Source: RMDB libraries RFM100 and RFMREP, as collected in RNAgym. Structure probing data (2A3 and DMS) for a 177-nucleotide construct. Values cover nucleotides 27 to 126. Conditions: 150 mM KOAc, 10 mM MgCl2 and 150 mM bicine (pH 8.5), 24 C.
RNA sequence: GGGAACGACUCGAGUAGAGUCGAAAAUGGGGUCCAUUGUUUACGGUUGAUAGAAGCCAGUUUUGUCAUUUUGAUGAAAUUUCAUCCUAUCCUUAGUUCCAAAACCGCUCCAAUGACUUCCUUUUUAGUCACAUCUAAAAUUCGUUUUAGAUGUGACAAAAGAAACAACAACAACAAC
Reactivity to 2A3 in 0.01 (KOAc 150mM, MgCl2 10mM, bicine 150mM(pH8.5), 24C), signal-to-noise 9, nucleotides 027 to 126: u110g000g000g010g010u040c070c020a020u020u040g050u040u060u120a030c030g010g020u020u050g030a030u020a050g040a060a020g040c060c040a020g010u010u010u020u030g040u020c050a140u030u110u160u300g030a020u010g020a020a040a050u080u100u050c040a050u040c010c010u010a020u010c000c010u120u120a050g030u120u080c030c000a050a080a050a050c010c010g020c030u030c030c000a010a020u030g010a030c000u150u210c010c010u050u080u010u020u110a030
Reactivity to DMS in 0.01 (KOAc 150mM, MgCl2 10mM, bicine 150mM(pH8.5), 24C), signal-to-noise 9, nucleotides 027 to 126: u010g010g000g000g000u010c050c060a030u000u000g000u010u000u010a130c050g010g010u000u010g010a060u000a030g010a070a070g010c240c200a030g000u000u000u000u010g010u020c010a150u010u020u030u020g010a020u010g000a020a050a040u000u010u020c080a140u000c060c020u000a030u000c020c110u010u010a120g000u000u000c070c070a070a080a050a040c030c040g010c130u000c290c020a020a020u000g000a050c040u000u000c010c010u020u000u000u000u010a150